[RMDB]
RNA sequence: GGGAACGACUCGAGUAGAGUCGAAAAGCCUAGCAAAAACAGCGGGGAAAGAAGACCCUGUUGAGCUUGACUCUAGUCUGAUAUUGCAUAGUGACCUAAAAGGUGUAGAAUAGGUGGGAGGGGCAACGGUACUACCUGCAUUCGUGCAGGUAGUACCAAAAGAAACAACAACAACAAC
Reactivity to DMS in 0.01 (KOAc 150mM, MgCl2 10mM, bicine 150mM(pH8.5), 24C), signal-to-noise 2, nucleotides 027 to 126: g000c020c010u010a010g070c060a030a050a050a140a180c140a030g000c050g010g000g010g010a080a120a230g000a100a080g040a130c000c000c000u020g050u000u000g040a270g020c040u040u000g000a080c050u020c040u020a040g010u020c020u020g000a060u000a020u050u010g000c050a070u020a110g020u000g000a060c000c050u010a060a060a100a050g030g000u010g000u040a040g000a040a030u010a080g000g040u020g000g030g000a140g000g000g000g030c110a090a150c160
Reactivity to 2A3 in 0.01 (KOAc 150mM, MgCl2 10mM, bicine 150mM(pH8.5), 24C), signal-to-noise 2, nucleotides 027 to 126: g010c000c020u020a070g040c040a000a020a020a000a030c010a010g070c000g000g000g000g080a300a090a000g300a090a030g080a120c000c000c020u000g040u040u020g050a060g000c010u010u110g010a060c000u050c020u020a010g040u060c010u010g020a020u010a060u240u060g010c030a000u030a040g050u050g100a020c020c020u100a090a150a030a030g010g030u070g020u030a080g040a270a240u040a010g100g010u050g000g000g020a080g010g010g000g010c050a060a030c130
Chemical mapping of a 177-nucleotide RNA with DMS and 2A3. The reactions ran in a buffer of 150 mM KOAc, 10 mM MgCl2 and 150 mM bicine (pH 8.5), at 24 C. Reactivities are given for positions 27 through 126. For DMS the reverse transcriptase was MarathonRT. The 2A3 profile rests on 1,239 reads.